RNA sequence: GGGAACGACUCGAGUAGAGUCGAAAAGUAUGCGGAAAUCAAAUAAAUAGAAUAGUGAUAUGCAGCUAGUGUUAAUUGAUCUUUUUGUAGGUAGUGCUAUUAAUUGAUAUUUCCGAUUUAGCUGUGCCUAGGGUCCUAGGUUCGCCUAGGACCCUAGAAAAGAAACAACAACAACAAC
Reactivity to DMS in 0.01 (KOAc 150mM, MgCl2 10mM, bicine 150mM(pH8.5), 24C), signal-to-noise 1, nucleotides 027 to 126: g000u000a000u000g000c000g020g020a080a040a050u000c110a040a050a150u010a110a040a100u000a120g020a100a020u000a060g000u000g000a050u040a050u000g030c030a030g010c010u000a010g030u070g000u040u000a130a140u040u020g000a060u010c010u000u010u000u000u000g020u020a030g000g000u030a090g000u030g000c000u000a000u020u000a120a020u000u010g000a070u010a090u000u000u020c000c000g000a040u010u020u030a080g000c000u000g000u020g000c100
Reactivity to 2A3 in 0.01 (KOAc 150mM, MgCl2 10mM, bicine 150mM(pH8.5), 24C), signal-to-noise 2, nucleotides 027 to 126: g070u070a220u120g030c000g020g000a000a030a010u050c050a070a040a120u210a000a140a050u200a110g130a030a000u060a010g070u050g000a000u230a100u250g040c020a020g110c000u140a000g020u000g180u290u110a280a140u100u120g170a050u080c010u000u230u070u000u000g090u070a000g010g010u000a000g110u130g130c030u000a000u000u130a100a080u030u060g010a070u070a030u060u070u000c000c000g000a020u030u000u260a060g040c000u000g030u130g140c000
This 177-nucleotide RNA was probed chemically with DMS and 2A3. For DMS, 1,793 sequencing reads were counted. As a SHAPE reagent, 2A3 marks flexible, mostly unpaired nucleotides at the ribose 2'-OH. The RNA was probed in 150 mM KOAc, 10 mM MgCl2 and 150 mM bicine (pH 8.5) at 24 C. The 2A3 profile rests on 541 reads. DMS adducts were read by reverse transcription with MarathonRT.